[RMDB]
RNA sequence: GGGAACGACUCGAGUAGAGUCGAAAACGAUUGACUCGGCCGAGGCCAGCCUCAACCGCAUCGUCACGGGGGUGCGUACCGGCGCUUCCGGGUCAGGCAAUCGGGCAGUGCCGGGCCCAGCGGCUGCCAUUUAGGACGCUUUCGAGCGUCCUAAAUGAAAAGAAACAACAACAACAAC
Reactivity to 2A3 in 0.01 (KOAc 150mM, MgCl2 10mM, bicine 150mM(pH8.5), 24C), signal-to-noise 5, nucleotides 027 to 126: c010g010a020u040u090g070a100c010u020c080g030g020c010c030g040a020g030g060c090c140a030g010c010c020u050c020a070a080c050c010g000c010a030u010c010g300u090c040a050c120g130g030g010g000g010u010g000c010g020u040a070c000c080g020g000c010g000c020u050u020c040c050g090g000g010u040c020a020g020g000c010a000a050u070c030g020g010g010c040a020g050u060g170c040c010g020g020g000c000c000c000a020g010c010g000g010c000u000g010c000
Reactivity to DMS in 0.01 (KOAc 150mM, MgCl2 10mM, bicine 150mM(pH8.5), 24C), signal-to-noise 3, nucleotides 027 to 126: c100g000a020u020u000g000a040c010u010c090g010g010c130c020g010a060g020g000c020c110a110g000c010c030u000c070a130a150c300c010g000c010a010u000c050g010u030c050a150c070g010g000g000g010g000u000g000c020g000u010a030c230c240g000g000c020g000c030u010u000c040c120g000g050g000u010c050a050g000g000c020a020a040u000c060g000g030g000c040a040g000u010g000c010c010g000g000g050c030c010c020a180g010c020g000g000c000u000g020c040
Notes
The record gives the reactivity of an RNA of 177 nucleotides to 2A3 and DMS. DMS adducts were read by reverse transcription with MarathonRT. For 2A3 the reverse transcriptase was SuperScript II with manganese. The reactions ran in a buffer of 150 mM KOAc, 10 mM MgCl2 and 150 mM bicine (pH 8.5), at 24 C. For 2A3, 4,799 sequencing reads were counted.